An RNA of 170 nucleotides, treated with 2A3 and DMS and read out base by base. Values are in units of 0.01, from 0 to 300, in steps of 10. For 2A3 the reverse transcriptase was SuperScript II with manganese. For DMS, 22,267 sequencing reads were counted. The 2A3 profile rests on 5,731 reads.

RNA sequence: GGGAACGACUCGAGUAGAGUCGAAAAUACCUCGGCCUUCAACUGGUUGUUGUUGGCAGGUACAUUGCAUUAUUUCUUUGCACAGACUUCCAUAUUUGUAGACUGGCGGUCAUACAAUUAUGCUGUGAUACAAGUCAGUUCGCUGACUUGAAAAGAAACAACAACAACAAC
Reactivity to 2A3 in 0.01 (KOAc 150mM, MgCl2 10mM, bicine 150mM(pH8.5), 24C), signal-to-noise 5, nucleotides 027 to 129: u070a000c000c000u010c030g010g000c000c000u020u060c010a020a000c070u260g250g010u140u120g000u030u010g000u000u000g050g000c000a000g020g000u020a080c040a160u060u180g030c030a020u060u120a050u030u250u050c010u110u100u100g010c000a000c010a030g000a060c020u210u050c050c010a030u030a070u030u020u030g050u020a030g010a030c010u040g140g100c130g110g000u050c020a040u010a010c000a030a050u030u020a020u020g020c010u000g010u000g060a020u030a140
Reactivity to DMS in 0.01 (KOAc 150mM, MgCl2 10mM, bicine 150mM(pH8.5), 24C), signal-to-noise 4, nucleotides 027 to 129: u020a060c030c030u030c050g030g060c010c020u000u050c000a000a000c070u030g040g050u020u030g050u030u010g030u000u000g020g060c020a030g020g020u000a130c200a120u010u010g040c040a120u000u000a000u030u040u010c030u030u030u070g030c000a010c000a000g020a080c050u060u080c300c020a030u030a040u030u010u050g020u020a050g020a060c000u030g030g040c220g050g010u000c060a110u000a010c000a030a050u050u020a010u030g010c060u040g020u030g020a130u040a180